[RMDB]
RNA sequence: GGGAACGACUCGAGUAGAGUCGAAAAAUGCAGGGAACAUUGGGUACAAGCUGGUCCAGCGGCUCGCAGGGGCAGAGGCCUACGGGCCGUUCCUCCAGGGGUUCGCGAAACCGGUGAGCGACCUGUCCAACCUCUUACAAUUCGUUGUAAGAGGUUGAAAAGAAACAACAACAACAAC
Reactivity to 2A3 in 0.01 (KOAc 150mM, MgCl2 10mM, bicine 150mM(pH8.5), 24C), signal-to-noise 7, nucleotides 027 to 126: a000u130g000c050a050g030g010g090a080a030c040a110u110u220g060g010g000u070a040c020a060a030g000c010u010g000g000u010c010c020a010g000c010g000g000c000u000c040g130c060a040g010g000g020g000c050a040g040a040g240g000c000c010u030a040c130g020g000g000c000c000g010u070u070c000c000u010c010c000a030g060g020g000g000u160u300c020g000c000g010a030a010a000c010c000g000g020u030g010a010g010c130g020a030c000c010u020g030u010c020
Reactivity to DMS in 0.01 (KOAc 150mM, MgCl2 10mM, bicine 150mM(pH8.5), 24C), signal-to-noise 9, nucleotides 027 to 126: a070u010g000c040a050g010g000g010a110a080c100a110u010u000g010g010g010u000a080c060a140a300g010c020u000g000g000u000c040c020a300g020c010g000g010c010u000c010g020c080a230g010g000g010g010c270a060g000a110g000g010c000c000u000a080c150g040g000g030c000c000g000u010u000c120c000u000c030c040a150g010g000g000g010u000u010c020g030c010g010a070a240a040c030c010g000g010u000g000a180g010c080g000a060c010c000u000g000u000c110